[RMDB]
RNA sequence: GGGAACGACUCGAGUAGAGUCGAAAACUUCUCUCGUCUUCCUCGGUCAACCUUCGAAGUUCCUCUUCUUCCUCCCUGCUGAGGUUCUUCCCUCCCGAGGAGAGCUGCUUCUUCUUGUUCUCCAGGGUCCGUAACAGCUUCGGCUGUUACAAAAGAAACAACAACAACAAC
Reactivity to DMS in 0.01 (KOAc 150mM, MgCl2 10mM, bicine 150mM(pH8.5), 24C), signal-to-noise 9, nucleotides 027 to 129: c130u030u020c040u020c020u020c060g030u000c030u040u010c010c000u000c020g000g020u030c000a110a140c010c040u000u070c080g040a060a060g020u020u000c000c000u000c050u010u010c050u040u030c030c020u020c020c000c000u020g000c040u040g030a100g020g040u020u010c040u010u010c020c020c050u000c000c030c030g030a080g030g010a000g000a000g000c060u000g020c140u040u040c080u060u030c090u030u050g020u030u020c020u030c010c000a220g000g000g000u050c100c070
Reactivity to 2A3 in 0.01 (KOAc 150mM, MgCl2 10mM, bicine 150mM(pH8.5), 24C), signal-to-noise 9, nucleotides 027 to 129: c030u130u040c020u000c010u000c030g040u010c020u130u040c010c000u010c020g010g030u070c050a070a060c010c010u100u090c070g050a060a020g020u040u030c000c000u030c000u060u000c000u130u080c010c000u030c000c000c000u030g010c030u020g030a030g020g000u030u000c000u020u010c000c010c000u060c000c000c010g040a120g030g000a020g000a000g020c020u070g030c020u100u090c000u140u030c020u120u160g020u010u000c010u000c000c010a010g030g020g010u050c030c030

Description
Source: RMDB library 15KLIB, as collected in RNAgym. Chemical mapping of a 170-nucleotide RNA with DMS and 2A3. For DMS the reverse transcriptase was MarathonRT.